[RMDB]
RNA sequence: GGGAACGACUCGAGUAGAGUCGAAAAGAAUCGUAUAGCUCUAGCCCUCUUCAAGAACCCAUUCGGUUAAAUGAUUUUCUGGGACUAUUGGAAUGCGUUAAAAAGAAUAUUCCUCUAACAGAUAUUCAGUAUCAAUCACCUUCGGGUGAUUGAUACUAAAAGAAACAACAACAACAAC
Reactivity to 2A3 in 0.01 (KOAc 150mM, MgCl2 10mM, bicine 150mM(pH8.5), 24C), signal-to-noise 3, nucleotides 027 to 126: g080a020a040u190c080g020u070a090u060a130g050c000u060c010u000a020g020c000c010c000u000c020u010u000c050a110a070g000a130a130c040c000c010a140u140u170c040g040g020u090u100a010a130a110u120g060a060u170u030u250u170c060u050g040g000g080a150c050u020a050u000u000g040g080a080a000u050g020c050g040u080u190a090a160a060a000a020g080a120a000u020a040u090u150c070c040u080c110u080a110a030c040a080g060a040u060a150u120u000c000
Reactivity to DMS in 0.01 (KOAc 150mM, MgCl2 10mM, bicine 150mM(pH8.5), 24C), signal-to-noise 1, nucleotides 027 to 126: g000a090a040u000c020g020u000a110u010a150g000c000u010c060u110a120g010c100c000c070u000c020u030u030c080a070a130g020a140a130c030c050c120a160u000u030c140g030g000u020u040a010a020a140u050g000a040u030u000u000u030c150u000g000g060g020a080c060u000a020u000u000g020g000a080a020u000g000c070g000u000u000a020a100a000a130a080g000a050a080u020a040u010u010c010c020u000c050u050a060a080c100a040g030a070u000a050u000u000c070